About this RNA: The data come from the RNA Mapping Database (RMDB), library RFM100. Chemical mapping of a 177-nucleotide RNA with 2A3 and DMS. DMS adducts were read by reverse transcription with MarathonRT.
RNA sequence: GGGAACGACUCGAGUAGAGUCGAAAACCAUAGAUAGCUGGCGUUAAGUUGUAAUGUAGUAUAAAUCAUACAAUUCUUGUAGUACAUCAUAUAUAGCACUGAAUUACCAAAUUCCUGAUAAAUAAGGGACCAAUAGGAUCUUCGGAUCCUAUUGGUCAAAAGAAACAACAACAACAAC
Reactivity to 2A3 in 0.01 (KOAc 150mM, MgCl2 10mM, bicine 150mM(pH8.5), 24C), signal-to-noise 1, nucleotides 027 to 126: c000c000a090u000a000g060a020u090a000g020c120u070g270g000c110g000u040u000a000a150g000u100u040g070u020a220a000u000g030u090a070g090u000a120u000a160a110a040u070c150a000u000a100c060a030a030u000u040c000u120u000g000u000a050g030u070a060c000a000u060c000a000u110a000u050a090u000a110g060c010a010c280u000g060a030a000u090u020a060c000c000a250a000a000u030u000c040c010u090g090a120u020a120a140a030u160a180a000g100g000
Reactivity to DMS in 0.01 (KOAc 150mM, MgCl2 10mM, bicine 150mM(pH8.5), 24C), signal-to-noise 2, nucleotides 027 to 126: c000c000a120u070a030g080a210u030a010g000c000u000g020g000c050g000u070u020a080a140g000u110u010g020u000a030a070u000g020u000a040g000u000a050u000a070a040a050u210c100a040u010a000c050a120a090u070u060c040u020u020g000u000a040g000u040a080c040a060u060c080a180u000a090u010a100u020a170g030c020a000c040u030g000a140a030u060u000a020c060c110a060a100a160u030u000c020c020u020g000a020u010a000a030a020u040a000a040g030g030
The RNA was probed in 150 mM KOAc, 10 mM MgCl2 and 150 mM bicine (pH 8.5) at 24 C.